[RMDB]
RNA sequence: GGGAACGACUCGAGUAGAGUCGAAAAAAGCUUAAGUAGCAGGUUGGAUGUCUAACUGGGGCCCGGAACCCUUAAACAUGAGUAAAGGCUGUAGCCCAUCCCUUCCUAAGCUCUCCAGCCCCAAAGGCCAGUCCUAUAGAUUCGUCUAUAGGACUGGAAAAGAAACAACAACAACAAC
Reactivity to 2A3 in 0.01 (KOAc 150mM, MgCl2 10mM, bicine 150mM(pH8.5), 24C), signal-to-noise 1, nucleotides 027 to 126: a000a000g060c040u050u020a070a030g060u060a030g060c020a010g000g060u070u070g040g000a060u010g020u080c060u030a040a080c100u070g030g000g070g000c030c030c020g070g020a060a040c000c000c020u010u050a150a210a020c050a070u170g040a040g130u120a030a040a020g020g040c020u060g130u300a020g040c000c000c000a010u020c000c000c000u040u010c030c010u050a080a000g000c000u040c010u030c050c010a030g000c000c000c000c010a030a020a000g080g030
Reactivity to DMS in 0.01 (KOAc 150mM, MgCl2 10mM, bicine 150mM(pH8.5), 24C), signal-to-noise 3, nucleotides 027 to 126: a080a080g000c000u010u010a100a080g010u000a040g030c040a070g000g010u000u020g000g010a100u000g000u000c040u000a100a100c150u010g040g000g010g020c040c010c080g030g000a140a080c050c030c010u000u000a070a080a070c110a080u000g000a070g010u010a050a120a100g000g000c050u000g010u000a080g010c020c010c020a100u000c020c010c020u000u000c010c010u000a050a090g010c030u000c040u000c030c040a120g020c040c000c000c030a060a090a110g000g010